[RMDB]
RNA sequence: GGGAACGACUCGAGUAGAGUCGAAAAGUUCACCAGCGGUGUAUUCGGAUCGUUCAACAAGGCGGAAUAAUCUUUGCUGGAGAUACCGUCAACAAACAAGUUUGGGUCAUAACUAGGCGUGGAAACCAUCUUAGGUAUCGUUCGCGAUACCUAAGAUAAAAGAAACAACAACAACAAC
Reactivity to 2A3 in 0.01 (KOAc 150mM, MgCl2 10mM, bicine 150mM(pH8.5), 24C), signal-to-noise 4, nucleotides 027 to 126: g020u090u070c060a060c080c010a020g040c020g080g000u080g020u050a070u010u080c010g000g030a040u040c010g080u080u080c020a060a060c020a100a120g010g000c010g010g070a060a060u180a100a060u040c050u030u080u110g090c090u110g050g000a020g010a000u040a070c010c020g000u050c000a010a020c030a020a070a010c030a030a070g030u060u100u050g050g000g020u030c030a040u050a170a030c040u020a040g080g000c050g050u050g000g050a040a060a020c030c000
Reactivity to DMS in 0.01 (KOAc 150mM, MgCl2 10mM, bicine 150mM(pH8.5), 24C), signal-to-noise 5, nucleotides 027 to 126: g020u010u000c030a130c020c020a130g010c030g020g000u000g010u010a060u000u000c020g020g010a050u000c020g020u010u010c030a090a070c110a110a110g000g020c020g010g020a150a090u010a070a080u020c020u000u000u010g020c090u020g040g000a030g010a060u000a090c030c010g000u010c030a060a070c180a070a070a110c140a060a080g010u000u000u000g000g010g000u000c060a050u000a060a070c050u000a060g000g000c030g000u000g000g000a060a070a110c120c060